RNA sequence: GGGAACGACUCGAGUAGAGUCGAAAAGGCGUCUUCGCUGCCUCGGCCGCCUUGCACUGACCGGUAGCCGCCGUAAUAGCGGCAUUGUUCCCAUAAACGGAUGUGGGUGUGGGUGACGAAGUAGCAGGGCGUAAUCGAGGUUCGCCUCGAUUACGCCAAAAGAAACAACAACAACAAC
Reactivity to DMS in 0.01 (KOAc 150mM, MgCl2 10mM, bicine 150mM(pH8.5), 24C), signal-to-noise 1, nucleotides 027 to 126: g010g020c050g040u000c020u000u000c180g010c020u010g000c000c040u000c010g000g010c150c020g040c010c010u000u010g020c010a040c020u000g020a080c090c000g000g010u000a120g000c000c000g000c010c020g050u010a110a120u020a130g000c000g000g040c000a040u000u000g010u000u010c000c020c010a230u040a020a140a070c080g030g000a120u000g020u000g020g010g070u000g030u010g010g010g010u000g020a110c010g000a040a040g010u000a040g030c120a090g030
Reactivity to 2A3 in 0.01 (KOAc 150mM, MgCl2 10mM, bicine 150mM(pH8.5), 24C), signal-to-noise 1, nucleotides 027 to 126: g070g020c020g050u000c040u100u030c050g030c050u020g000c020c010u010c000g010g050c130c000g060c000c010u060u130g000c020a010c010u110g080a010c020c000g010g000u010a020g000c000c010g000c000c000g020u000a030a040u130a130g010c000g020g000c000a010u030u120g030u010u010c000c000c020a050u140a010a150a010c030g050g030a090u210g100u210g300g020g010u030g000u040g030g010g000u020g010a040c050g030a030a000g020u060a000g000c040a010g010